[RMDB]
RNA sequence: GGGAACGACUCGAGUAGAGUCGAAAAGAUAUGGACAUAAGCGAGUCGAUAAGCAGGUAUCGGAAACGAUACCCUGCUUUUGACGACUCCUUAUGUCCUAAGUCAAAGCGUCUGUUCGCAGACGCAACGUUACAGGUACGUUCGCGUACCUGUAACGAAAAGAAACAACAACAACAAC
Reactivity to 2A3 in 0.01 (KOAc 150mM, MgCl2 10mM, bicine 150mM(pH8.5), 24C), signal-to-noise 4, nucleotides 027 to 126: g030a000u050a040u150g000g000a000c000a010u010a010a020g070c130g220a010g000u010c080g190a160u080a300a000g000c000a010g040g000u000a000u000c010g030g010a060a020a010c010g000a000u000a000c020c010c000u000g000c020u020u010u010u080g130a060c110g000a000c000u000c000c000u000u010a000u000g000u000c000c000u000a010a000g010u000c010a020a120a100g030c000g000u020c010u030g090u080u160c300g000c130a000g010a010c010g000c010a020a010
Reactivity to DMS in 0.01 (KOAc 150mM, MgCl2 10mM, bicine 150mM(pH8.5), 24C), signal-to-noise 3, nucleotides 027 to 126: g010a030u000a300u000g010g000a000c000a010u000a010a000g010c230g000a010g000u000c000g020a130u010a010a020g040c010a040g000g050u000a010u000c010g000g000a100a070a180c000g010a000u000a000c120c100c040u010g010c000u000u000u000u000g010a190c140g000a030c000u000c010c000u000u000a000u000g000u000c000c000u000a010a070g010u010c060a110a070a130g000c000g010u000c000u010g020u000u020c260g020c030a020g010a010c000g000c000a000a010